Chemical mapping of a 177-nucleotide RNA with DMS and 2A3. For DMS the reverse transcriptase was MarathonRT. For 2A3 the reverse transcriptase was SuperScript II with manganese. Conditions: 150 mM KOAc, 10 mM MgCl2 and 150 mM bicine (pH 8.5), 24 C.

RNA sequence: GGGAACGACUCGAGUAGAGUCGAAAAAAUUCCUGCAGCUCGGUCUGUCCGGAGAGAAGUGAUCAAGCCCCGGCUGUCGAGAGGCUCAGGGAGCCUUUACGUUUUUUCGCUUUUACCUGCCAAUCAAUAUAAACUAUAAUUUCGAUUAUAGUUUAUAAAAAGAAACAACAACAACAAC
Reactivity to DMS in 0.01 (KOAc 150mM, MgCl2 10mM, bicine 150mM(pH8.5), 24C), signal-to-noise 4, nucleotides 027 to 126: a050a200u000u010c000c010u000g010c090a080g010c020u000c040g010g000u030c030u010g010u020c040c000g000g000a080g020a120g020a080a080g030u020g030a070u030c110a100a130g020c030c030c020c020g010g040c040u000g000u010c010g000a080g000a020g000g000c040u010c040a110g010g020g010a040g010c020c020u020u010u000a060c070g000u000u000u000u010u020u010c030g000c050u000u010u010u010a100c030c010u000g000c060c060a080a100u030c080a040a120
Reactivity to 2A3 in 0.01 (KOAc 150mM, MgCl2 10mM, bicine 150mM(pH8.5), 24C), signal-to-noise 6, nucleotides 027 to 126: a000a010u060u010c000c000u000g020c030a020g010c010u030c020g050g090u100c040u020g110u060c010c010g090g000a080g010a010g030a240a030g090u110g090a150u150c090a090a040g010c000c000c010c020g030g000c020u030g010u020c010g000a020g000a000g040g000c030u020c070a050g060g050g030a030g010c000c000u060u100u070a080c060g020u060u030u000u020u030u120c040g010c010u070u050u040u080a070c000c010u000g060c030c020a050a100u110c020a100a010